RNA sequence: GGGAACGACUCGAGUAGAGUCGAAAAUUGGAUAAUACGAUAAGACAAAUAAUUAGAGCGGUUCCAGUGACUCUGUUUUAACUGGAACUGCCUGGGCUACGGGCUCAAUUGGAUUAGCCUUGCCAUUAAAUUACCACGUUUUCGAACGUGGUAAUUUAAAAGAAACAACAACAACAAC
Reactivity to 2A3 in 0.01 (KOAc 150mM, MgCl2 10mM, bicine 150mM(pH8.5), 24C), signal-to-noise 4, nucleotides 027 to 126: u090u080g040g020a030u050a150a020u050a150c050g040a060u090a160a030g130a070c050a020a160a030u190a060a060u120u110a030g020a020g030c000g000g000u000u000c000c010a000g000u000g020a030c000u070c100u280g190u130u150u000u060a070a000c000u010g000g000a000a000c000u000g000c000c000u010g010g000g000c010u050a060c170g040g010g000c020u060c040a000a070u080u110g110g040a040u050u050a010g000c000c000u020u040g020c000c000a000u020u020
Reactivity to DMS in 0.01 (KOAc 150mM, MgCl2 10mM, bicine 150mM(pH8.5), 24C), signal-to-noise 3, nucleotides 027 to 126: u010u000g000g010a020u000a020a050u000a020c050g010a030u000a070a060g000a160c120a070a090a100u030a070a090u020u020a090g010a070g060c000g000g020u000u010c000c000a010g010u000g000a090c120u020c160u040g040u030u020u000u000a140a020c000u000g000g000a000a010c000u000g000c000c010u000g000g000g010c000u020a080c170g020g020g000c010u000c050a070a060u010u000g010g020a300u000u000a010g000c020c000u000u020g020c010c010a120u030u000